Structure probing data (DMS) for a 177-nucleotide construct.
RNA sequence: GGGAACGACUCGAGUAGAGUCGAAAACAGGGACGGCGGAUGUGGUCGCUUCUGCCGCGCAGGUGGUGAGUAGCUGGGGCUUUAGCAUUACACCAGAUACGCUAAACCAGAUUGCCAGCGAAGUGGGCAAACGGCCGUGUUUCGACACGGCCGUUUGAAAAGAAACAACAACAACAAC
Reactivity to DMS in 0.01 (KOAc 150mM, MgCl2 10mM, bicine 150mM(pH8.5), 24C), signal-to-noise 1, nucleotides 027 to 126: c090a150g020g000g020a090c060g040g000c030g010g010a020u010g000u000g020g010u000c140g020c060u000u000c020u010g020c010c010g020c130g000c100a060g010g030u010g000g000u000g010a080g000u000a030g030c020u000g010g000g000g010c160u000u020u020a050g010c040a110u000u000a130c130a150c140c130a080g000a100u010a060c120g030c050u000a040a090a050c050c010a130g000a110u010u000g010c000c010a020g000c030g020a050a060g010u000g000g000g000
For DMS, 1,101 sequencing reads were counted. Reactivities are rounded to 0.1 and cut off at 0 and 3. It was measured as part of the RMDB library OK2TRN.